[RMDB]
RNA sequence: GGGAACGACUCGAGUAGAGUCGAAAAGAUAUGGAACCUCUACAGAUUGAUGACCUCGGAAACGAGCAAGAUCAUGUAGAGGGUUCCUAAGUCAAAAGUAGGCGCUAUCUUCGGAUAGCGCCUACAAGUAAAAGCUGAAGUUCGCUUCAGCUUUUACAAAAGAAACAACAACAACAAC
Reactivity to DMS in 0.01 (KOAc 150mM, MgCl2 10mM, bicine 150mM(pH8.5), 24C), signal-to-noise 2, nucleotides 027 to 126: g010a030u000a260u010g010g000a020a060c000c010u000c000u000a010c010a020g010a070u010u000g000a030u010g000a300c300c000u000c000g000g000a090a050a030c010g000a010g010c030a080a160g030a010u000c000a040u010g010u000a010g020a010g010g020g000u000u010c000c000u010a020a160g010u010c010a070a040a110a180g000u000a030g000g010c020g000c000u000a000u000c000u000u030c240g000g000a000u000a030g000c010g020c000c000u010a000c000a010a080